[RMDB]
RNA sequence: GGGAACGACUCGAGUAGAGUCGAAAACAUCACGCUCUAACAUUCGUGCAACGGUAUAAUUUGACGCAAGGCGGAUCAUUCCUUCCGUACCUAACUGCCCUAGCCACUCAGAGUUAAAUACAAUACGGUUACUUCAGCAUUUCGAUGCUGAAGUAACAAAAGAAACAACAACAACAAC
Reactivity to 2A3 in 0.01 (KOAc 150mM, MgCl2 10mM, bicine 150mM(pH8.5), 24C), signal-to-noise 3, nucleotides 027 to 126: c030a090u120c050a000c040g030c010u020c020u060a090a000c010a150u070u080c080g030u100g040c030a060a030c050g040g030u070a080u030a150a200u110u060u160g050a040c010g000c060a040a020g000g000c000g000g000a040u060c000a060u060u110c010c000u080u020c040c000g030u040a110c010c010u040a070a090c020u040g020c000c000c000u030a040g000c040c020a060c000u060c040a000g020a040g090u010u080a050a070a060u240a040c080a040a050u130a150c090g110
Reactivity to DMS in 0.01 (KOAc 150mM, MgCl2 10mM, bicine 150mM(pH8.5), 24C), signal-to-noise 2, nucleotides 027 to 126: c060a030u010c040a060c050g010c030u000c020u000a060a040c120a150u020u000c130g050u000g010c080a020a130c140g000g040u010a060u010a060a090u000u010u000g000a050c100g000c150a010a100g000g000c100g010g010a040u000c120a100u010u010c020c020u000u000c060c030g000u000a070c060c020u000a070a090c070u000g000c010c000c030u000a150g000c050c030a030c040u030c050a060g010a070g030u000u000a020a020a040u020a090c140a080a100u010a020c270g050